[RMDB]
The data come from the RNA Mapping Database (RMDB), library OK3TST. Structure probing data (2A3) for a 207-nucleotide construct. Values cover nucleotides 27 to 156.
RNA sequence: GGGAACGACUCGAGUAGAGUCGAAAACAGUACCAGGUACGCCUGGUACUGAAGCACUCCACUACGGUGGAGUGCAACGGGGGACACGUGUGGUGCCGUCCGCUCCCCCCAGGGAAUAACUGAUGCACCACAAGACCUCGUGUACGCACGAGGUCAACCCAGUAUGGUACUUCGGUACCAUACUGGGAAAAGAAACAACAACAACAAC
Reactivity to 2A3 in 0.01 (KOAc 150mM, MgCl2 10mM, bicine 150mM(pH8.5), 24C), signal-to-noise 2, nucleotides 027 to 156: c010a000g020u000a010c000c000a000g010g030u060a050c210g070c050c010u000g010g000u000a000c000u000g000a010a000g010c010a000c010u000c000c010a020c010u030a020c230g070g000u000g000g000a000g000u000g010c010a000a000c010g000g000g000g000g000a000c010a000c050g040u040g010u000g020g000u010g000c000c000g030u020c050c090g040c070u020c040c020c000c000c010c040a150g170g010g120a100a150u100a130a040c060u080g050a070u140g000c010a000c000c000a000c010a020a020g000a000c000c000u010c000g000u000g000u000a030c280g030c070a000c000g000a000g000g000u000c000a000a000
The RNA was probed in 150 mM KOAc, 10 mM MgCl2 and 150 mM bicine (pH 8.5) at 24 C.